[RMDB]
RNA sequence: GGGAACGACUCGAGUAGAGUCGAAAAUAAAAAUCGAGUUAUUACAAACUUUCGUACUAUAGGAUGGUGCUCUCCCAGCGAGAUAGAGUCUGUGGAAUAUAAACGGUCCUUGAUCAAUGCGGAGUGGCGAGUGAUAGCUAUUCGUAGCUAUCACUCGAAAAGAAACAACAACAACAAC
Reactivity to 2A3 in 0.01 (KOAc 150mM, MgCl2 10mM, bicine 150mM(pH8.5), 24C), signal-to-noise 4, nucleotides 027 to 126: u100a000a040a040a000a010u160c070g010a040g060u080u070a140u160u090a090c180a080a090a040c040u050u120u160c010g040u040a040c030u030a050u170a060g120g030a020u040g080g040u050g070c000u000c000u000c020c000c000a000g000c020g020a020g010a060u130a040g080a010g010u000c010u030g040u110g030g110a150a020u220a080u110a180a100a000c000g030g000u000c010c000u000u040g030a020u060c040a050a040u060g030c060g020g010a010g050u040g060g050
Reactivity to DMS in 0.01 (KOAc 150mM, MgCl2 10mM, bicine 150mM(pH8.5), 24C), signal-to-noise 3, nucleotides 027 to 126: u050a010a060a080a130a020u030c080g000a090g010u020u010a060u040u060a130c190a100a080a070c060u000u000u000c040g020u010a070c070u010a070u030a020g000g000a170u030g010g030u010g000c060u020c030u000c000c000c000a040g010c300g000a030g000a160u000a020g010a110g000u000c020u040g030u000g000g000a120a140u030a110u070a080a050a020c020g000g000u000c000c020u000u000g010a110u030c050a050a260u000g000c150g000g020a060g000u000g000g000